RNA sequence: GGGAACGACUCGAGUAGAGUCGAAAAGUGUAGUUUUCCACUUUGCGCUAAUGGUCUUGUAUUCGGCUUAUACAAGAAUAUGUGCACAGGUAGUCCUUCUAUAGUUGAAUUUAAUAGGUUGGCUACCAAAGCGAAUGGUUCGCCAUUCGCAAAAGAAACAACAACAACAAC
Reactivity to 2A3 in 0.01 (KOAc 150mM, MgCl2 10mM, bicine 150mM(pH8.5), 24C), signal-to-noise 7, nucleotides 027 to 129: g080u070g040u090a050g000u040u060u120u040c000c000a040c010u070u090u070g000c000g000c020u060a050a040u140g170g010u020c000u000u000g010u000a000u020u140c100g250g000c150u140u090a020u000a020c000a020a010g000a020a010u060a070u060g030u000g010c010a030c050a040g000g000u000a000g020u070c000c000u000u000c010u000a060u040a110g120u060u170g130a200a150u150u140u150a120a040u030a040g110g000u040u010g000g030c020u000a000c000c000a030a030a020
Reactivity to DMS in 0.01 (KOAc 150mM, MgCl2 10mM, bicine 150mM(pH8.5), 24C), signal-to-noise 3, nucleotides 027 to 129: g040u030g040u070a000g010u040u000u070u010c030c030a070c070u000u020u030g020c020g000c110u040a060a040u080g060g000u020c040u040u000g020u000a000u010u020c210g000g000c180u110u050a050u010a000c020a000a000g010a000a000u000a000u030g040u060g030c100a150c300a150g020g020u010a000g030u040c030c080u010u020c010u050a000u050a130g050u070u050g040a170a100u060u040u090a110a030u020a030g040g030u020u080g030g010c010u020a000c020c000a050a050a040